The record gives the reactivity of an RNA of 177 nucleotides to DMS and 2A3.
Reactivities are given for positions 27 through 126.
For 2A3 the reverse transcriptase was SuperScript II with manganese.
For 2A3, 5,492 sequencing reads were counted.
RNA sequence: GGGAACGACUCGAGUAGAGUCGAAAAGUGCACGACUUCGGUCGUGCACAAAUAAAGGCAGUCGAGUGCGUACGGCACAGUCAUACGCUGACGCCACGACAUAAAGUAACGUCUUCGGACGUUACAAGAAGUGAGUCUAGUUCGCUAGACUCACUUCAAAAGAAACAACAACAACAAC
Reactivity to DMS in 0.01 (KOAc 150mM, MgCl2 10mM, bicine 150mM(pH8.5), 24C), signal-to-noise 3, nucleotides 027 to 126: g020u000g000c000a000c000g000a010c000u000u010c150g050g010u010c000g030u000g030c000a000c000a010a050a070u000a040a110a090g000g010c050a060g050u010c000g020a110g000u000g020c010g010u000a050c060g010g000c000a130c180a130g020u010c110a090u000a070c090g010c010u000g000a040c030g000c000c010a170c070g000a040c050a140u000a050a050a140g000u000a000a000c000g010u000c000u010u000c170g030g000a010c000g000u000u000a000c010a080a110
Reactivity to 2A3 in 0.01 (KOAc 150mM, MgCl2 10mM, bicine 150mM(pH8.5), 24C), signal-to-noise 4, nucleotides 027 to 126: g000u010g020c020a010c030g020a010c020u040u110c250g030g000u000c000g000u000g000c000a000c000a000a000a000u030a000a010a000g100g010c070a050g000u020c010g060a060g150u230g060c000g020u060a190c010g020g000c000a050c050a230g100u080c040a050u060a130c090g000c030u020g010a010c010g000c020c000a030c030g040a010c010a040u200a050a150a020g000u000a000a000c000g010u000c000u020u060c180g100g000a000c010g000u000u000a000c000a000a010
Conditions: 150 mM KOAc, 10 mM MgCl2 and 150 mM bicine (pH 8.5), 24 C.